[RMDB]
RNA sequence: GGGAACGACUCGAGUAGAGUCGAAAAUUCUAAGACCUUCACGGCUCGGCGACAAGUCGGCCGAAAGGAUGCGCAGCGCGCGAGUGUCGUCGAGCGCACGACGCGCGAGCUCGGGCGAUGUCCUGAGAGGGUAUACACUGUUCGCAGUGUAUACCCUAAAAGAAACAACAACAACAAC
Reactivity to 2A3 in 0.01 (KOAc 150mM, MgCl2 10mM, bicine 150mM(pH8.5), 24C), signal-to-noise 3, nucleotides 027 to 126: u050u010c020u060a190a040g050a140c000c000u040u000c120a030c100g030g000c070u190c270g010g000c050g080a200c140a220a110g020u010c000g020g010c000c000g010a010a000a000g000g000a010u060g080c090g000c040a090g040c020g010c010g000c000g010a030g030u080g080u100c060g050u030c090g100a060g110c030g000c040a020c050g080a090c010g000c000g000c010g010a020g020c020u000c010g030g010g000c040g180a190u150g030u050c000c010u010g030a030g030
Reactivity to DMS in 0.01 (KOAc 150mM, MgCl2 10mM, bicine 150mM(pH8.5), 24C), signal-to-noise 3, nucleotides 027 to 126: u000u000c040u000a110a160g020a130c010c010u000u010c110a170c050g020g000c010u030c020g010g000c000g010a140c260a110a120g010u010c010g000g020c000c000g000a040a030a030g010g010a130u000g010c100g020c080a090g010c020g030c030g000c000g020a150g000u010g000u000c040g000u000c080g010a130g020c090g040c080a030c030g010a150c030g010c020g010c000g000a120g010c010u000c030g000g010g000c020g020a110u000g010u000c010c010u000g010a090g020
The data come from the RNA Mapping Database (RMDB), library OK2TST. The record gives the reactivity of an RNA of 177 nucleotides to 2A3 and DMS. The reactions ran in a buffer of 150 mM KOAc, 10 mM MgCl2 and 150 mM bicine (pH 8.5), at 24 C. DMS adducts were read by reverse transcription with MarathonRT.